[RMDB]
RNA sequence: GGGAACGACUCGAGUAGAGUCGAAAAAGGCGCGAAAAUUGCCCACUCUUUGCAGGAGGCAGUUAUGAGACGUGAAGAUGAGUAUCUUGUAAAGAGGGAUAGGAGAAUUGGAGGGCAAGUUUGGUGCUCCAGAAUAUACUUUCGAGUAUAUUCUGGAAAAAGAAACAACAACAACAAC
Reactivity to 2A3 in 0.01 (KOAc 150mM, MgCl2 10mM, bicine 150mM(pH8.5), 24C), signal-to-noise 9, nucleotides 027 to 126: a000g060g000c010g000c020g050a010a010a010a040u010u010g010c000c000c000a050c000u010c000u020u030u030g010c010a010g000g010a010g050g000c020a020g020u070u090a170u230g120a090g030a070c070g070u150g120a080a060g060a110u130g010a020g070u090a070u050c000u000u020g020u060a010a030a010g020a010g020g000g010a030u120a060g110g060a120g070a110a150u200u160g080g060a090g020g010g000c010a020a000g000u010u030u040g080g000u020g000c010
Reactivity to DMS in 0.01 (KOAc 150mM, MgCl2 10mM, bicine 150mM(pH8.5), 24C), signal-to-noise 9, nucleotides 027 to 126: a100g010g010c010g030c010g000a040a020a040a050u000u010g000c010c000c020a200c010u000c010u000u000u000g010c020a020g000g010a050g010g020c030a130g000u000u010a090u020g000a140g020a080c100g010u020g010a110a120g010a080u010g010a130g000u020a080u000c000u000u000g010u030a010a020a030g000a040g010g000g010a110u020a090g000g010a130g010a100a130u010u010g010g010a130g020g000g000c020a020a020g010u000u010u000g000g030u000g000c040